[RMDB]
RNA sequence: GGGAACGACUCGAGUAGAGUCGAAAAAACUUGACAGGUUCCUUGAUAAAACUGCUUCACGAAUGAAAGCAGAAUCAGGUUUUAAGAAGGGGGUCGAUCAGUACUCAACGGAAUCAGGAGAAGAGCAAAAUGUGUUUCUUUUCGAAGAAACACAUUUAAAAGAAACAACAACAACAAC
Reactivity to 2A3 in 0.01 (KOAc 150mM, MgCl2 10mM, bicine 150mM(pH8.5), 24C), signal-to-noise 1, nucleotides 027 to 126: a000a000c080u040u020g050a040c080a210g060g000u070u040c010c000u010u080g020a020u160a040a060a010a020c000u000g060c000u010u030c030a040c230g250a090a160u210g020a200a000a000g030c020a010g000a010a000u020c000a020g060g060u060u000u000u170a150a070g060a010a070g150g030g000g020g000u020c000g010a040u050c010a000g040u030a060c050u030c060a050a060c010g050g040a040a090u060c010a050g000g060a060g020a100a000g020a000g010c020a040
Reactivity to DMS in 0.01 (KOAc 150mM, MgCl2 10mM, bicine 150mM(pH8.5), 24C), signal-to-noise 5, nucleotides 027 to 126: a030a030c020u010u010g010a080c200a160g000g000u010u000c020c010u000u020g030a080u000a050a080a130a130c000u010g010c000u000u010c030a300c260g010a140a080u000g000a100a030a050g010c010a020g020a070a050u000c040a010g000g010u000u000u010u010a030a090g010a090a100g010g010g000g010g020u000c040g020a050u000c040a070g010u010a060c070u000c050a040a080c110g010g000a070a050u000c040a060g000g000a080g010a050a060g000a070g010c120a070
Overview
The record gives the reactivity of an RNA of 177 nucleotides to 2A3 and DMS. For 2A3 the reverse transcriptase was SuperScript II with manganese. Values are in units of 0.01, from 0 to 300, in steps of 10.